[RMDB]
An RNA of 207 nucleotides, treated with 2A3 and read out base by base. Conditions: 150 mM KOAc, 10 mM MgCl2 and 150 mM bicine (pH 8.5), 24 C. The 2A3 profile rests on 448 reads.

RNA sequence: GGGAACGACUCGAGUAGAGUCGAAAAGUAGGUUGUGAUGCCUCCAUGUGAGAAGGUCAUUCGGGUGGCUACUUAAGCGCUUCUAUACUUAAGUACCGAAUGUUAUACCGUCAUUAUCUAGUGAUAAUAACGAUGCCUAUUUCUAUGAAAUAGAAGCCGAUUAUGACCCUUUCGAGGGUCAUAAUCGAAAAGAAACAACAACAACAAC
Reactivity to 2A3 in 0.01 (KOAc 150mM, MgCl2 10mM, bicine 150mM(pH8.5), 24C), signal-to-noise 1, nucleotides 027 to 156: g070u070a030g000g000u060u050g150u160g090a070u210g000c010c000u120c020c120a180u080g040u130g080a060g020a060a060g040g010u000c000a000u000u010c000g010g010g000u050g060g060c020u000a000c000u020u010a000a000g010c040g040c140u180u020c010u250a130u050a160c000u010u010a010a000g010u000a000c000c000g010a000a000u020g050u140u070a250u030a230c030c010g000u020c020a020u000u000a000u000c020u040a070g060u050g300a000u020a020a040u060a020a030c020g000a020u180g000c020c020u020a160u050u110u000c110u170a110u180g140a240a140a000u050a020g020a080a000g000c080